[RMDB]
RNA sequence: GGGAACGACUCGAGUAGAGUCGAAAAAAUCGUCGACGCAUCGACGACGGUACUGCCAUGAGACCGUAACGAGGACAUGUCGCCUCGAAUGGCGUCGGGGAGCCGGCAGCUUACCCCAAGGAUGAGCAAAAGAAUGAAACGUUCGCGUUUCAUUCAAGGCAACAGUAUAGUUCGCUAUACUGUUGCCAAAAGAAACAACAACAACAAC
Reactivity to 2A3 in 0.01 (KOAc 150mM, MgCl2 10mM, bicine 150mM(pH8.5), 24C), signal-to-noise 2, nucleotides 027 to 156: a000a000u030c000g010u000c010g000a060c060g000c180a100u080c030g020a020c010g000a000c000g000g000u010a000c010u050g000c000c010a070u080g050a060g010a150c000c020g030u030a030a010c010g000a030g000g020a030c050a210u260g110u220c070g000c000c000u000c000g000a020a010u020g000g020c010g030u050c010g000g020g000g000a040g080c060c010g070g010c020a030g010c030u040u130a150c000c000c000c000a000a060g120g000a090u200g030a040g090c040a050a040a040a080g010a000a000u000g000a000a000a000c000g000u040u090c300g020c000g120u030u030u010c000a000u000u000c000a010a020
Structure probing data (2A3) for a 207-nucleotide construct. Conditions: 150 mM KOAc, 10 mM MgCl2 and 150 mM bicine (pH 8.5), 24 C. It was measured as part of the RMDB library M2RFPK. For 2A3 the reverse transcriptase was SuperScript II with manganese.